[RMDB]
An RNA of 177 nucleotides, treated with 2A3 and read out base by base. Reactivities are given for positions 27 through 126. The reactions ran in a buffer of 150 mM KOAc, 10 mM MgCl2 and 150 mM bicine (pH 8.5), at 24 C. It was measured as part of the RMDB library OK1LIB.

RNA sequence: GGGAACGACUCGAGUAGAGUCGAAAAAUUCAGUCCUUGGGGAUACACCCUACAUAUGAUGGCCUUCGGGCCCGAGGGACCAAACACCAAGGAGAGGGUGUCAUGGGAAAAAGGUCUCUUGACUAGGGCGCUUCAAAGGCUUCGGCCUUUGAAGCGCAAAAGAAACAACAACAACAAC
Reactivity to 2A3 in 0.01 (KOAc 150mM, MgCl2 10mM, bicine 150mM(pH8.5), 24C), signal-to-noise 1, nucleotides 027 to 126: a000u180u110c090a000g060u020c000c010u050u040g000g000g000g050a020u050a240c080a050c090c030c000u120a140c170a070u270a010u120g300a180u130g010g030c000c000u000u120c180g000g000g020c000c000c000g000a110g000g000g020a050c000c070a010a120a000c030a000c000c020a000a000g000g000a020g050a010g000g000g000u000g040u060c120a170u050g000g000g040a030a060a000a080a080g020g000u000c000u010c020u050u140g020a010c070u160a120g000g020